[RMDB]
RNA sequence: GGGAACGACUCGAGUAGAGUCGAAAAAAACCUCAUCUUAAUUCUGGUCGUCCAUAUACUUUUAAGGCAUUGUCCAGGCAUAUGAGACCAACAGCCACAUGGAUUUGGCAUGUGAGUGAUGCAUGGUUACGCCGCACGCGGGACUUUGGUGUCAUUCCCAUGUGCAAAUAUUCGUAUUUGCACAUGGAAAAGAAACAACAACAACAAC
Reactivity to 2A3 in 0.01 (KOAc 150mM, MgCl2 10mM, bicine 150mM(pH8.5), 24C), signal-to-noise 4, nucleotides 027 to 156: a000a020a020c060c020u090c030a130u010c020u120u160a180a130u220u160c060u100g040g000u020c030g020u030c070c010a020u020a020u030a150c040u050u120u080u180a140a120g050g010c080a210u100u300g030u040c010c010a010g000g000c000a030u040a010u070g110a130g000a020c010c010a040a050c030a020g000c000c010a030c010a050u080g120g050a200u140u060u210g100g040c000a020u020g020u020g050a130g060u010g020a050u030g000c050a010u070g000g000u010u030a030c050g020c020c020g060c050a040c100g030c000g020g010g000a010c000u000u000u090g060g020u020g030u020c010a040u070u070c000
Reactivity to DMS in 0.01 (KOAc 150mM, MgCl2 10mM, bicine 150mM(pH8.5), 24C), signal-to-noise 1, nucleotides 027 to 156: a010a090a090c000c000u000c100a080u020c070u020u020a010a080u010u000c060u000g010g000u010c090g020u010c030c020a010u000a040u000a010c020u010u010u000u030a120a000g000g000c000a200u020u000g000u000c000c020a210g000g000c010a020u000a030u010g000a140g000a070c030c040a060a090c090a170g030c050c010a040c010a090u000g010g010a220u000u000u000g020g000c080a060u010g000u010g010a240g010u010g000a020u000g010c020a030u000g010g010u000u010a050c060g000c000c010g010c100a080c060g020c030g010g000g030a020c040u000u000u010g060g040u000g050u000c020a230u000u000c000
This 207-nucleotide RNA was probed chemically with 2A3 and DMS.
The reactions ran in a buffer of 150 mM KOAc, 10 mM MgCl2 and 150 mM bicine (pH 8.5), at 24 C.
DMS adducts were read by reverse transcription with MarathonRT.
The DMS profile rests on 2,597 reads.